[RMDB]
The data come from the RNA Mapping Database (RMDB), library OK2TST. This 177-nucleotide RNA was probed chemically with DMS and 2A3. The DMS profile rests on 1,812 reads. For DMS the reverse transcriptase was MarathonRT. For 2A3 the reverse transcriptase was SuperScript II with manganese. The RNA was probed in 150 mM KOAc, 10 mM MgCl2 and 150 mM bicine (pH 8.5) at 24 C. Reactivities are given for positions 27 through 126.
RNA sequence: GGGAACGACUCGAGUAGAGUCGAAAAACGUACAGGACCAAAUGCAUAUCGAACUUCCUGUGUUCGCUACUCACAAGACUUCAGAUUCUGUGAUGAAUUGGUGGUCAGUGUGUGCACUCCAUCCGCCUCCCAUAGGAGCAUUCGUGCUCCUAUGGGAAAAAGAAACAACAACAACAAC
Reactivity to DMS in 0.01 (KOAc 150mM, MgCl2 10mM, bicine 150mM(pH8.5), 24C), signal-to-noise 2, nucleotides 027 to 126: a070c180g030u020a060c060a070g000g010a070c110c070a070a100a100u000g010c090a120u000a060u000c040g010a030a070c040u000u000c070c060u000g000u010g000u000u000c040g020c150u000a030c070u030c010a030c060a100a060g000a050c060u000u000c090a110g000a060u000u000c000u000g020u000g000a060u010g010a020a040u000u010g000g000u010g010g010u000c010a080g020u000g010u000g010u010g000c030a060c070u000c050c090a070u020c030c050g000c170c060
Reactivity to 2A3 in 0.01 (KOAc 150mM, MgCl2 10mM, bicine 150mM(pH8.5), 24C), signal-to-noise 2, nucleotides 027 to 126: a000c080g030u080a030c020a060g000g000a030c040c090a020a020a110u180g060c080a070u090a050u200c060g030a040a010c010u050u110c020c020u040g010u010g070u080u010c030g010c090u110a040c010u000c030a010c000a030a130g030a040c040u050u070c110a040g010a220u000u050c030u020g130u100g080a090u090g020a050a050u050u060g070g000u010g030g020u090c020a050g010u000g010u030g000u030g070c020a030c030u070c000c010a070u050c020c000g030c010c010